[RMDB]
RNA sequence: GGGAACGACUCGAGUAGAGUCGAAAACGAAUUGUAAUCGACCUCGUACGGAGAACCGAUGUCUCUUAUACACAUAUAAUAUGUAGGUAAGUAAAAAACAGCAAAAUAUCGUGCAGUACUCAGAUACGAUAAACUCCGUGAAGUAAUGCAUAAGCUGUAACGUAAAACUAUUCGUAGUUUUACGUUAAAAAGAAACAACAACAACAAC
Reactivity to 2A3 in 0.01 (KOAc 150mM, MgCl2 10mM, bicine 150mM(pH8.5), 24C), signal-to-noise 8, nucleotides 027 to 156: c030g030a070a080u170u210g050u180a060a090u080c040g020a030c010c020u020c020g040u050a040c020g010g030a020g020a100a040c050c010g030a030u070g050u010c010u000c000u090u040a030u210a080c010a000c010a000u110a010u110a230a160u170a080u140g020u010a030g070g000u020a020a030g060u140a020a040a060a060a040a020c020a000g010c030a010a070a080a130u140a080u120c060g020u010g000c010a010g030u030a040c020u030c050a020g040a180u120a090c040g020a020u090a110a070a030c020u010c030c000g010u010g020a040a000g000u040a030a020u030g010c020a020u020a140a040g010c020u040g010
Reactivity to DMS in 0.01 (KOAc 150mM, MgCl2 10mM, bicine 150mM(pH8.5), 24C), signal-to-noise 5, nucleotides 027 to 156: c050g010a110a130u000u000g020u010a060a210u000c030g010a060c040c010u000c030g030u000a080c040g000g000a040g020a110a110c060c050g010a140u000g020u010c040u000c030u000u000a110u010a100c030a050c020a080u000a130u000a110a140u010a080u000g000u000a060g040g020u010a030a120g010u020a000a050a060a080a070a040c020a080g010c060a070a050a080a070u000a100u000c090g020u010g030c020a040g010u000a030c050u000c040a100g030a150u000a070c040g010a120u000a060a070a080c090u000c070c020g030u000g000a070a040g020u010a020a080u000g000c020a030u000a060a210g010c030u010g010
An RNA of 207 nucleotides, treated with 2A3 and DMS and read out base by base.
The DMS profile rests on 14,343 reads.
For 2A3, 7,025 sequencing reads were counted.
The RNA was probed in 150 mM KOAc, 10 mM MgCl2 and 150 mM bicine (pH 8.5) at 24 C.